[RMDB]
The data come from the RNA Mapping Database (RMDB), library M2RFPK.
This 207-nucleotide RNA was probed chemically with 2A3.
The 2A3 profile rests on 423 reads.
For 2A3 the reverse transcriptase was SuperScript II with manganese.
Values cover nucleotides 27 to 156.
RNA sequence: GGGAACGACUCGAGUAGAGUCGAAAAGAAAGAAAGAAGCGAGCUGGCGCAGCCGCACGGGCAACCGUCAAUCCAGCACUUCACAAGUCUUGUCGUUCUGACAGGACAUCCAUCAACCCACUGGGAAAAAAGGACUACAGCUUCGGCUGUAGUCCAACAACACCCCCUAGUUCGCUAGGGGGUGUUGAAAAGAAACAACAACAACAAC
Reactivity to 2A3 in 0.01 (KOAc 150mM, MgCl2 10mM, bicine 150mM(pH8.5), 24C), signal-to-noise 1, nucleotides 027 to 156: g060a000a000a070g010a040a140a010g040a040a000g050c090g060a010g010c040u020g000g000c070g110c110a030g090c050c160g060c030a010c010g040g040g040c040a060a060c040c010g060u050c050a000a050u050c010c000a000g040c070a090c040u000u000c050a020c050a100a090g000u000c000u050u010g000u010c040g100u300u080c140u180g000a000c000a000g000g010a000c000a000u000c000c000a030u090c020a070a190c010c000c050a070c160u140g000g010g010a040a000a000a010a080a200g010g000a000c000u000a000c000a000g000c030u100u220c270g090g000c000u020g000u000a000g000u010c000c000a000a000